[RMDB]
RNA sequence: GGGAACGACUCGAGUAGAGUCGAAAAUUUAAAAUACUCUAUAAGGGCAAUGUGACGCAUGAUGCUAGCUCUGCCAUUAAUAGACCACAACUCACAUUUGUGAAGAAUUUUAUUACUGCCAAUCCGGAAAGACCGUUCUUCGGAACGGUCAAAAGAAACAACAACAACAAC
Reactivity to DMS in 0.01 (KOAc 150mM, MgCl2 10mM, bicine 150mM(pH8.5), 24C), signal-to-noise 1, nucleotides 027 to 129: u000u000u000a000a020a170a000u000a160c100u010c020u040a020u010a030a070g010g110g020c030a010a070u060g000u020g010a130c160g090c040a120u020g000a150u060g020c020u060a180g030c000u000c020u030g060c080c000a010u010u050a130a000u030a030g040a020c180c000a010c020a020a120c000u000c110a000c090a290u030u050u060g040u040g020a000a000g020a000a000u000u010u040u000a040u000u000a120c170u160g030c140c030a000a000u010c000c010g000g020a050a040a110
Reactivity to 2A3 in 0.01 (KOAc 150mM, MgCl2 10mM, bicine 150mM(pH8.5), 24C), signal-to-noise 2, nucleotides 027 to 129: u000u020u040a010a000a030a040u070a020c020u060c050u040a040u030a070a040g000g010g010c020a000a080u010g000u020g030a000c030g010c010a030u140g030a120u240g150c000u000a000g040c000u000c040u000g000c000c000a000u100u130a050a030u010a010g000a000c050c000a000c000a040a080c000u050c040a050c000a120u020u070u200g010u010g030a010a070g040a080a000u010u090u010u000a040u010u230a030c000u020g020c000c000a010a060u010c040c010g060g080a020a110a000

Structure probing data (DMS and 2A3) for a 170-nucleotide construct. The RNA was probed in 150 mM KOAc, 10 mM MgCl2 and 150 mM bicine (pH 8.5) at 24 C. For 2A3, 3,601 sequencing reads were counted. For DMS, 3,137 sequencing reads were counted. For DMS the reverse transcriptase was MarathonRT. The data come from the RNA Mapping Database (RMDB), library 15KLIB. DMS (dimethyl sulfate) methylates the pairing face of unpaired adenines and cytosines.